Structure probing data (2A3 and DMS) for a 177-nucleotide construct. The data come from the RNA Mapping Database (RMDB), library RFMREP.
[RMDB]
RNA sequence: GGGAACGACUCGAGUAGAGUCGAAAAUUGUGCUCUUCCUGAUGAUUGAGUGUUCACCUGGAUUUUCUGACCACCUUCCCUUGUGCUAUUCUGUCAGCCUACAGAUUCUGGUACCUGGAUUUUUACCGACUCUUAAAAUGUUCGCAUUUUAAGAGUCAAAAGAAACAACAACAACAAC
Reactivity to 2A3 in 0.01 (KOAc 150mM, MgCl2 10mM, bicine 150mM(pH8.5), 24C), signal-to-noise 4, nucleotides 027 to 126: u050u040g050u030g020c000u010c000u080u060c010c020u040g050a070u070g020a040u080u130g030a040g040u060g050u080u050c020a040c050c020u040g100g010a100u050u060u050u040c030u070g060a060c010c010a010c000c010u020u030c040c000c000u010u030g020u010g010c010u020a060u090u040c010u010g080u040c020a030g040c000c000u030a030c010a010g060a070u090u040c020u080g060g000u030a060c020c010u030g080g070a140u150u080u000u050u130a080c050c030
Reactivity to DMS in 0.01 (KOAc 150mM, MgCl2 10mM, bicine 150mM(pH8.5), 24C), signal-to-noise 6, nucleotides 027 to 126: u000u000g020u000g010c050u000c060u000u000c020c020u010g010a080u010g000a100u010u000g000a100g030u000g010u000u000c050a070c030c030u010g010g010a090u000u000u000u010c040u010g020a120c070c040a080c070c040u000u000c030c010c020u000u000g020u000g000c050u000a070u010u000c030u000g020u000c070a080g010c050c030u000a080c070a060g000a110u010u000c060u000g010g010u010a060c060c050u000g000g000a060u010u000u010u010u010a130c160c080
Notes:
The RNA was probed in 150 mM KOAc, 10 mM MgCl2 and 150 mM bicine (pH 8.5) at 24 C. Reactivities are given for positions 27 through 126. For 2A3 the reverse transcriptase was SuperScript II with manganese.